[RMDB]
RNA sequence: GGGAACGACUCGAGUAGAGUCGAAAAGCAACACCUCCUGGGAGAGAAUGUGAAUUCACAACUCAAUGUCCAGUAGAAAUCAGAAUUGAAGAAACCCUGAGUUUUCAAGCUUUCGUCCAGGGACAGGCAAUCGCGUGUAGUUCGCUACACGCGAUUGAAAAGAAACAACAACAACAAC
Reactivity to DMS in 0.01 (KOAc 150mM, MgCl2 10mM, bicine 150mM(pH8.5), 24C), signal-to-noise 2, nucleotides 027 to 126: g040c080a070a120c150a090c030c030u030c030c030u010g000g000g060a100g000a020g050a140a230u010g000u000g000a090a060u010u000c020a060c130a010a150c100u030c010a070a030u030g020u020c020c070a080g000u050a090g000a040a130a070u020c140a150g010a060a100u000u020g000a050a170g000a080a060a020c000c030c100u000g000a030g010u000u000u050u000c010a020a050g010c030u000u000u000c050g010u050c050c000a010g000g000g010a050c160a080g000g000
Reactivity to 2A3 in 0.01 (KOAc 150mM, MgCl2 10mM, bicine 150mM(pH8.5), 24C), signal-to-noise 3, nucleotides 027 to 126: g040c040a070a060c020a040c120c020u040c000c010u050g000g050g000a070g020a010g050a140a210u110g010u000g080a100a230u260u200c010a020c000a100a010c020u040c010a090a120u110g090u080c010c010a030g000u040a040g090a020a050a030u080c010a010g110a170a090u170u120g090a180a070g080a110a110a060c020c020c020u060g030a060g070u030u020u010u100c060a040a030g010c060u040u050u030c040g130u050c000c020a030g030g000g100a040c040a000g110g000